[RMDB]
The record gives the reactivity of an RNA of 177 nucleotides to DMS and 2A3.
RNA sequence: GGGAACGACUCGAGUAGAGUCGAAAAAACGCCGAAACCCCCCUCCAGACCGCCGCGCGUCUGCGCAAGAAACAUGGCGUCUCACUCGACGCCGCGGCGAAGAAGCCGCUUCCGCGCGAGGCCUUCGCCUAGGUACGUACUUCGGUACGUACCUAGGAAAAGAAACAACAACAACAAC
Reactivity to DMS in 0.01 (KOAc 150mM, MgCl2 10mM, bicine 150mM(pH8.5), 24C), signal-to-noise 3, nucleotides 027 to 126: a090a050c070g020c040c050g020a070a050a090c000c010c010c010c010c000u030c060c000a080g000a130c040c010g030c040c010g000c050g010c040g020u010c060u020g010c040g040c060a090a050g000a090a080a090c120a110u000g010g010c000g030u000c030u000c200a120c250u050c110g000a030c000g020c020c000g030c070g030g020c000g000a070a110g010a100a120g030c030c040g000c020u000u020c060c020g000c030g020c010g000a040g010g000c020c020u010u000c120g000
Reactivity to 2A3 in 0.01 (KOAc 150mM, MgCl2 10mM, bicine 150mM(pH8.5), 24C), signal-to-noise 4, nucleotides 027 to 126: a000a000c050g000c020c000g020a120a100a090c000c000c000c010c000c000u000c020c000a050g020a080c000c020g040c000c000g010c020g000c020g050u010c050u080g000c030g000c030a060a030g080a090a100a020c090a090u210g050g000c000g010u010c020u060c030a230c040u130c070g020a010c000g030c050c010g000c000g010g010c020g020a100a020g090a060a010g030c010c010g020c000u070u010c050c010g010c000g000c020g030a030g020g020c010c010u050u060c020g010
Record summary: For 2A3, 3,557 sequencing reads were counted. DMS adducts were read by reverse transcription with MarathonRT. It was measured as part of the RMDB library OK1LIB. The DMS profile rests on 4,018 reads. For 2A3 the reverse transcriptase was SuperScript II with manganese.